[RMDB]
RNA sequence: GGGAACGACUCGAGUAGAGUCGAAAAAUGUAAUUUAUUGAAUACUGUACUGAAAGUGAGAAACAGAAUGGUUAUGUGGGUACUCGACGUACGGUUUCUAGUGAAUAUGUAUCACUUUCUUACCAUCAUAAGGUCGCAGAAUCCUAAGCUGAACAAACUAUAAAUACGCUUUCGAGCGUAUUUAUAGAAAAGAAACAACAACAACAAC
Reactivity to DMS in 0.01 (KOAc 150mM, MgCl2 10mM, bicine 150mM(pH8.5), 24C), signal-to-noise 2, nucleotides 027 to 156: a100u000g010u000a040a070u010u000u000a090u000u010g020a100a090u010a060c030u010g010u000a090c030u000g000a060a040a080g030u020g020a100g020a160a110a180c020a050g010a090a110u010g050g020u000u000a070u000g040u010g020g010g040u000a030c030u020c030g030a300c240g010u010a030c040g010g010u000u000u010c020u000a090g010u000g000a020a080u000a090u000g030u020a080u000c030a040c030u000u010u010c000u010u000a030c020c020a090u000c060a130u000a100a090g040g010u000c040g010c060a040g000a080a050u000c030c030u020a050a300g000c030u000g020a080a120c070a080a050a170
Reactivity to 2A3 in 0.01 (KOAc 150mM, MgCl2 10mM, bicine 150mM(pH8.5), 24C), signal-to-noise 4, nucleotides 027 to 156: a000u120g020u090a070a070u050u100u110a110u090u090g010a030a020u100a160c030u030g010u010a010c010u060g070a040a050a060g050u050g040a020g040a030a080a010c060a030g100a140a130u120g030g110u200u120a040u100g080u040g040g050g040u050a050c010u010c070g070a020c040g030u030a010c020g040g020u000u040u020c030u050a020g020u010g060a060a030u100a050u200g060u060a060u050c010a010c000u040u040u010c010u030u030a040c030c030a020u090c010a030u070a230a020g020g020u000c020g020c060a020g030a060a030u010c010c020u060a090a030g000c070u060g050a030a000c180a190a020a010